[RMDB]
RNA sequence: GGGAACGACUCGAGUAGAGUCGAAAAAUGUGGAGUUUAAUAUCAACGGCAGGAGCAAGCGGCUCUAUCGCCACGAGGGGAGUGGCGGUGUUGAUUAUUUCAACGAAGACGGCUCCCCGAUGACCAAUAGUAUGGACUACUUCGGUAGUCCAUACUAAAAAGAAACAACAACAACAAC
Reactivity to 2A3 in 0.01 (KOAc 150mM, MgCl2 10mM, bicine 150mM(pH8.5), 24C), signal-to-noise 2, nucleotides 027 to 126: a000u140g060u070g030g080a080g060u070u170u160a130a120u030a070u150c060a050a060c060g090g030c050a050g020g020a010g030c010a200a060g160c080g160g010c050u000c000u080a100u040c010g000c030c000a020c080g030a100g000g010g020g000a070g050u040g060g210c000g000g020u050g000u020u000g010a010u080u170a110u040u110u020c020a020a020c020g000a080a000g170a010c000g010g000c000u040c040c060c010c000g030a010u030g030a040c000c000a000a060
Reactivity to DMS in 0.01 (KOAc 150mM, MgCl2 10mM, bicine 150mM(pH8.5), 24C), signal-to-noise 2, nucleotides 027 to 126: a100u020g010u010g000g010a150g020u000u010u000a090a080u010a070u000c110a100a160c100g000g030c230a090g000g000a030g010c030a120a130g010c120g000g020c020u010c030u010a010u000c060g010c000c010a040c050g010a100g020g010g000g010a070g020u000g000g010c000g000g020u010g000u000u000g000a020u000u000a090u010u000u000c030a010a010c020g010a090a160g010a080c010g010g000c000u000c000c000c000c000g000a070u000g040a180c060c070a110a120
Record summary:
Conditions: 150 mM KOAc, 10 mM MgCl2 and 150 mM bicine (pH 8.5), 24 C. An RNA of 177 nucleotides, treated with 2A3 and DMS and read out base by base. For DMS, 1,798 sequencing reads were counted. It was measured as part of the RMDB library OK2TST.